[RMDB]
RNA sequence: GGGAACGACUCGAGUAGAGUCGAAAACUGCCAGGAGCGCCGGGCGGGAAGCGGCCUGUGGCCGCCUGGCCUCUGACACGAGGCUGGCCGGGGAUGGCGCCCGAAGCUUUUCACCCAAGCCCAUGUGCAUUUGAGCACGGUUCGCCGUGCUCAAAUGAAAAGAAACAACAACAACAAC
Reactivity to DMS in 0.01 (KOAc 150mM, MgCl2 10mM, bicine 150mM(pH8.5), 24C), signal-to-noise 2, nucleotides 027 to 126: c040u000g000c000c050a300g000g020a100g020c080g040c010c000g000g030g060c050g030g010g020a150a050g000c020g050g000c000c030u140g000u070g000g000c010c060g030c030c030u010g000g000c000c000u000c000u000g000a070c300a200c300g000a010g030g020c000u000g010g000c020c000g040g000g000g020a100u050g000g030c000g010c010c040c010g000a030a150g000c000u000u000u000u020c110a150c000c070c030a080a090g030c010c040c100a090u120g010u020g000
Reactivity to 2A3 in 0.01 (KOAc 150mM, MgCl2 10mM, bicine 150mM(pH8.5), 24C), signal-to-noise 3, nucleotides 027 to 126: c010u020g040c030c000a070g000g020a280g010c020g040c010c010g070g130g080c000g030g030g050a080a020g020c020g020g020c020c020u300g090u300g090g000c000c000g000c000c010u030g030g000c000c000u010c030u020g140a030c010a020c160g000a000g000g010c000u000g040g000c000c020g040g020g010g130a080u120g000g000c000g010c000c000c010g000a060a000g010c000u030u010u030u100c060a100c010c010c010a010a000g020c030c010c020a130u180g080u120g080
The record gives the reactivity of an RNA of 177 nucleotides to DMS and 2A3. The reactions ran in a buffer of 150 mM KOAc, 10 mM MgCl2 and 150 mM bicine (pH 8.5), at 24 C. DMS adducts were read by reverse transcription with MarathonRT. For 2A3, 1,588 sequencing reads were counted. Values are in units of 0.01, from 0 to 300, in steps of 10. It was measured as part of the RMDB library RFM100.